Structure probing data (DMS and 2A3) for a 177-nucleotide construct. It was measured as part of the RMDB library OK2TRN. The reactions ran in a buffer of 150 mM KOAc, 10 mM MgCl2 and 150 mM bicine (pH 8.5), at 24 C. Reactivities are given for positions 27 through 126. DMS (dimethyl sulfate) methylates the pairing face of unpaired adenines and cytosines. For 2A3 the reverse transcriptase was SuperScript II with manganese. The 2A3 profile rests on 7,375 reads.

RNA sequence: GGGAACGACUCGAGUAGAGUCGAAAAGCUGUAGGCAUUAGUACAGAAGAUGUUUACAAGAUUUCAACAGAAAUAUUUAAAGAUGCAGUACGUGAAGGAAGAUAUCCACAGCGGUUAGAGUGGCAAGUAAGUUUACGUAUUUCGAUACGUAAACUUAAAAAGAAACAACAACAACAAC
Reactivity to DMS in 0.01 (KOAc 150mM, MgCl2 10mM, bicine 150mM(pH8.5), 24C), signal-to-noise 9, nucleotides 027 to 126: g020c060u000g020u000a040g010g000c040a030u000u000a090g020u010a110c230a140g000a140a180g010a030u000g010u000u000u000a040c070a040a090g000a090u000u000u000c030a090a120c160a130g000a040a040a050u000a050u010u000u000a060a060a080g000a070u000g010c050a060g000u000a050c080g010u000g010a090a120g010g000a060a090g010a100u010a060u000c030c030a040c090a110g010c040g000g010u000u000a070g010a090g010u000g000g000c100a040a070g000
Reactivity to 2A3 in 0.01 (KOAc 150mM, MgCl2 10mM, bicine 150mM(pH8.5), 24C), signal-to-noise 6, nucleotides 027 to 126: g020c040u020g010u030a000g030g000c010a010u000u070a050g090u140a080c050a060g110a090a050g020a070u020g000u030u020u020a020c020a050a040g020a090u060u100u070c080a130a070c020a090g120a070a080a020u170a090u090u240u160a130a170a030g060a030u070g010c010a010g050u050a030c040g020u040g040a040a020g020g020a030a030g040a160u070a040u080c020c010a020c030a020g020c030g010g020u080u040a030g010a020g050u050g000g010c000a070a000g060